The data come from the RNA Mapping Database (RMDB), libraries RFM100 and RFMREP. This 177-nucleotide RNA was probed chemically with DMS and 2A3. DMS (dimethyl sulfate) methylates the pairing face of unpaired adenines and cytosines. Values cover nucleotides 27 to 126. For DMS the reverse transcriptase was MarathonRT.
RNA sequence: GGGAACGACUCGAGUAGAGUCGAAAAAAUUUGGAUUGCUGCUCGCAGAUAAUGCGGGUAAUCCGCAGACGAUCCUCAUGGGUAAGUAGAUUGAGGUAAUUAUGCGCCAGCUCGUUACUGAGAAUAUUUGAUAUCAAUAAUUCGUUAUUGAUAUCAAAAAAGAAACAACAACAACAAC
Reactivity to DMS in 0.01 (KOAc 150mM, MgCl2 10mM, bicine 150mM(pH8.5), 24C), signal-to-noise 9, nucleotides 027 to 126: a050a060u010u010u010g010g000a040u010u000g010c100u010g010c030u010c010g020c020a020g000a140u030a080a090u000g010c000g000g000g020u010a020a020u010c040c030g020c100a060g010a110c110g000a070u010c010c010u000c060a060u010g010g000g010u020a060a090g010u010a090g000a120u010u010g000a080g010g010u000a060a050u010u020a070u010g000c040g000c230c060a100g010c020u000c130g000u000u010a050c060u020g000a100g000a090a100u020a090u010
Reactivity to 2A3 in 0.01 (KOAc 150mM, MgCl2 10mM, bicine 150mM(pH8.5), 24C), signal-to-noise 7, nucleotides 027 to 126: a000a020u170u110u090g040g010a040u030u050g030c060u060g010c010u050c020g010c010a010g050a120u180a240a080u130g000c000g000g020g000u020a010a030u040c010c010g000c000a020g010a070c050g030a040u110c000c000u020c010a030u070g040g070g030u120a130a100g050u040a070g070a150u030u060g030a010g040g010u020a070a040u080u110a070u130g030c030g010c020c010a020g020c020u020c010g040u050u040a050c040u070g020a020g040a180a040u070a150u100